This 177-nucleotide RNA was probed chemically with DMS and 2A3.
For 2A3, 1,608 sequencing reads were counted.
The reactions ran in a buffer of 150 mM KOAc, 10 mM MgCl2 and 150 mM bicine (pH 8.5), at 24 C.
It was measured as part of the RMDB library OK2TRN.
RNA sequence: GGGAACGACUCGAGUAGAGUCGAAAACGAUGCGUGGUGGCUGUUCGAUCGCGCGGCUUCGCUGGUCGAGCUCGAUGUCGCGCCCGCGGGCAGCGAGACCGCGACGGGGGCCGACGACGGCGAGCCACGCAUCACCCGCUUUCGAGCGGGUGAUGCGAAAAGAAACAACAACAACAAC
Reactivity to DMS in 0.01 (KOAc 150mM, MgCl2 10mM, bicine 150mM(pH8.5), 24C), signal-to-noise 1, nucleotides 027 to 126: c120g000a040u010g000c040g020u000g010g030u000g010g010c030u000g000u040u000c020g010a130u000c050g020c120g010c020g020g000c010u010u010c000g020c010u020g020g010u000c030g000a220g010c000u010c030g000a080u020g040u000c000g010c080g000c070c050c120g030c050g020g010g000c100a060g020c010g000a040g000a070c130c030g010c000g010a010c080g000g000g000g000g010c090c010g000a030c020g000a030c010g000g000c010g020a190g010c000c000a060
Reactivity to 2A3 in 0.01 (KOAc 150mM, MgCl2 10mM, bicine 150mM(pH8.5), 24C), signal-to-noise 2, nucleotides 027 to 126: c070g070a080u150g020c050g020u010g000g030u040g080g000c060u090g180u170u140c050g050a260u020c030g000c050g000c060g130g020c050u160u130c080g030c140u200g110g000u050c020g020a070g030c000u010c020g150a140u030g010u040c000g000c020g020c040c000c000g090c020g010g140g060c080a010g000c030g010a030g010a060c100c100g040c010g010a000c000g000g020g000g000g000c050c010g020a030c000g040a040c000g000g020c000g000a010g000c010c010a000